[RMDB]
RNA sequence: GGGAACGACUCGAGUAGAGUCGAAAAAAGUUGCACCAGGUACGGAUUCCAGACGUUGCCAAACAGGGUGACAUGAGGAUCACCCAUGUACUGUCCCUUGGCAGCCGUACCUGGUGCUGGUGAAAAACUGUGAGCUAAGAUUCGUCUUAGCUCACAGAAAAGAAACAACAACAACAAC
Reactivity to DMS in 0.01 (KOAc 150mM, MgCl2 10mM, bicine 150mM(pH8.5), 24C), signal-to-noise 2, nucleotides 027 to 126: a060a050g000u000u010g000c000a000c010c000a010g000g000u000a000c000g000g020a170u010u010c080c090a100g010a060c200g020u000u000g000c010c010a010a000a080c030a030g000g010g010u000g000a000c010a140u010g010a160g010g000a230u000c060a010c000c000c000a030u000g020u000a070c180u010g000u000c010c020c010u010u000g000g000c020a160g000c040c000g010u000a000c010c000u000g000g000u000g000c000u000g000g000u010g000a080a040a080a040a130
Reactivity to 2A3 in 0.01 (KOAc 150mM, MgCl2 10mM, bicine 150mM(pH8.5), 24C), signal-to-noise 1, nucleotides 027 to 126: a010a040g270u100u020g000c000a000c000c000a010g000g000u000a000c000g000g030a050u220u030c040c010a000g070a130c050g110u170u070g000c000c040a010a050a010c040a050g000g000g030u030g000a000c000a060u260g180a170g130g050a110u060c030a050c010c010c000a020u030g010u020a090c110u110g040u050c030c020c050u030u000g010g000c000a020g040c030c000g000u010a000c000c000u000g000g010u000g000c000u000g000g020u120g050a090a030a010a020a020
Notes:
An RNA of 177 nucleotides, treated with DMS and 2A3 and read out base by base. For 2A3 the reverse transcriptase was SuperScript II with manganese. Source: RMDB library M2PK90, as collected in RNAgym.